[RMDB]
RNA sequence: GGGAACGACUCGAGUAGAGUCGAAAAUGUUAAGUCAGGCAACGAGCGAGACCCGCACUUCUAGUUGCCAGCAAUACCCUUGAGGUAGUUGGGUACACUAGGAGGACUGCCGCUGCUAAAGCGGAGGUAAUCUGAUUGCAUUCGUGCAAUCAGAUUAAAAAGAAACAACAACAACAAC
Reactivity to DMS in 0.01 (KOAc 150mM, MgCl2 10mM, bicine 150mM(pH8.5), 24C), signal-to-noise 7, nucleotides 027 to 126: u030g000u020u020a050a080g010u000c060a080g010g010c070a080a060c070g000a070g000c030g010a110g000a160c050c010c020g010c140a130c000u010u000c000u000a010g010u000u000g000c000c000a030g000c020a020a070u000a010c000c000c020u030u020g010a170g020g010u000a010g010u000u010g000g000g010u010a010c170a020c000u000a000g000g010a010g000g000a090c070u010g010c000c000g000c000u000g000c170u030a060a110a040g010c010g010g010a050g000g010
Reactivity to 2A3 in 0.01 (KOAc 150mM, MgCl2 10mM, bicine 150mM(pH8.5), 24C), signal-to-noise 7, nucleotides 027 to 126: u160g010u080u090a080a060g070u040c040a030g020g050c030a050a020c060g020a020g020c020g010a050g040a100c010c020c030g030c030a030c000u010u000c000u000a000g000u000u020g010c000c000a000g000c000a000a010u010a010c000c000c000u080u260g140a190g090g000u000a010g000u010u010g030g000g000u020a020c040a000c120u000a000g000g000a000g010g010a010c040u090g040c000c000g000c000u040g000c120u230a160a060a010g010c000g010g000a010g030g040